[RMDB]
RNA sequence: GGGAACGACUCGAGUAGAGUCGAAAAUCUGUGGUUGCGGACAACAAUUGUCCUAGCUCAAGGCAGAACGGGUCGAAGGAGUCCACAUAAGUCAGUGGUGGUGGGAGCCCCUGUUGGGGGCGCUAUAUAGCAGUUAUAACUUCGGUUAUAACUGCUAAAAAGAAACAACAACAACAAC
Reactivity to 2A3 in 0.01 (KOAc 150mM, MgCl2 10mM, bicine 150mM(pH8.5), 24C), signal-to-noise 3, nucleotides 027 to 126: u040c000u050g030u060g060g130u180u080g040c010g030g000a000c000a110a010c030a150a210u150u080g010u000c000c040u020a030g000c000u010c070a080a050g060g010c010a000g000a070a010c050g040g000g000u090c030g030a060a020g050g030a030g070u000c010c020a030c020a050u190a130a070g040u080c100a010g020u030g080g000u000g000g100u080g020g030g010a020g000c000c000c000c020u090g070u170u140g030g000g000g010g000c030g000c030u020a050u010a000
Reactivity to DMS in 0.01 (KOAc 150mM, MgCl2 10mM, bicine 150mM(pH8.5), 24C), signal-to-noise 5, nucleotides 027 to 126: u020c020u010g020u010g020g010u030u000g030c100g010g000a030c040a050a170c220a080a160u020u020g000u000c000c010u010a100g000c030u010c120a110a120g010g020c020a050g000a060a090c090g010g000g000u000c100g000a100a080g000g000a130g000u000c030c040a030c100a070u040a080a110g010u010c110a070g020u010g000g010u010g000g010u040g000g000g010a160g000c010c000c000c000u010g020u000u010g000g010g000g010g010c040g000c060u010a040u030a140

Description
This 177-nucleotide RNA was probed chemically with 2A3 and DMS. It was measured as part of the RMDB libraries RFM100 and RFMREP. The RNA was probed in 150 mM KOAc, 10 mM MgCl2 and 150 mM bicine (pH 8.5) at 24 C. For DMS the reverse transcriptase was MarathonRT. 2A3 adducts were read by reverse transcription with SuperScript II with manganese.